[RMDB]
RNA sequence: GGGAACGACUCGAGUAGAGUCGAAAAGUGGCGCGUGCCUGUAGUCCCAGCUACUAGGGAGGCUGAGGCUGGAGGAUCGCUUGAGUCCAGGAGUUCUGGGCUGUAGUGCGCUAUGCCGAUCGGGUGUCCGCACUAAGUUCGGCAUCAAUAUGGUGACCUUUAAAGGCGUCUUCGGACGCCUUUAAAGAAAAGAAACAACAACAACAAC
Reactivity to 2A3 in 0.01 (KOAc 150mM, MgCl2 10mM, bicine 150mM(pH8.5), 24C), signal-to-noise 2, nucleotides 027 to 156: g090u080g000g010c000g000c040g070u100g050c040c020u260g300u070a030g010u000c030c000c000a000g000c020u040a020c010u130a030g000g080g000a080g020g000c010u000g040a030g040g010c000u010g030g000a020g030g020a070u130c040g000c040u100u130g000a010g030u020c000c000a000g010g080a200g110u250u230c010u010g000g010g000c010u000g040u020a020g010u040g000c000g000c010u050a030u030g000c000c000g010a040u020c020g050g000g010u020g010u020c050c070g140c050a010c020u050a170a180g010u000u000c010g020g000c000a010u050c030a030a110u140a050u140g140g000u020g050a040c010